[RMDB]
RNA sequence: GGGAACGACUCGAGUAGAGUCGAAAAGAUAUGGACUGUCGGUUGCCUGAACUACGGUUUGUCUCGGAAACGAGACAUACCGCAUAAGCGACAGUCCUAAGUCAAAACACUGCCUUCGGGCAGUGAACAGUAAUCAAGCCUUCGGGCUUGAUUACUGAAAAGAAACAACAACAACAAC
Reactivity to DMS in 0.01 (KOAc 150mM, MgCl2 10mM, bicine 150mM(pH8.5), 24C), signal-to-noise 1, nucleotides 027 to 126: g000a000u000a050u020g000g010a010c000u000g000u000c000g000g000u010u000g060c140c120u020g020a080a170c160u020a110c020g000g000u000u010u000g000u000c000u000c000g000g010a030a000a020c000g010a000g010a010c010a000u000a000c000c000g000c060a040u030a060a140g010c000g020a030c030a020g020u000c000c000u000a000a070g010u020c010a080a170a160a300c010a000c000u000g000c000c070u000u000c250g050g000g040c000a000g000u000g000a040a200
Reactivity to 2A3 in 0.01 (KOAc 150mM, MgCl2 10mM, bicine 150mM(pH8.5), 24C), signal-to-noise 1, nucleotides 027 to 126: g000a010u000a010u030g000g010a010c010u010g000u030c060g160g300u070u070g190c080c140u190g180a210a140c140u130a050c250g000g000u000u000u000g000u020c000u000c000g030g000a010a040a000c000g000a010g000a050c000a000u010a010c000c000g000c090a260u130a150a010g060c000g010a010c000a010g000u000c000c000u020a000a000g010u000c010a000a060a000a100c020a000c000u000g000c000c000u050u070c240g090g010g000c010a000g000u000g000a050a000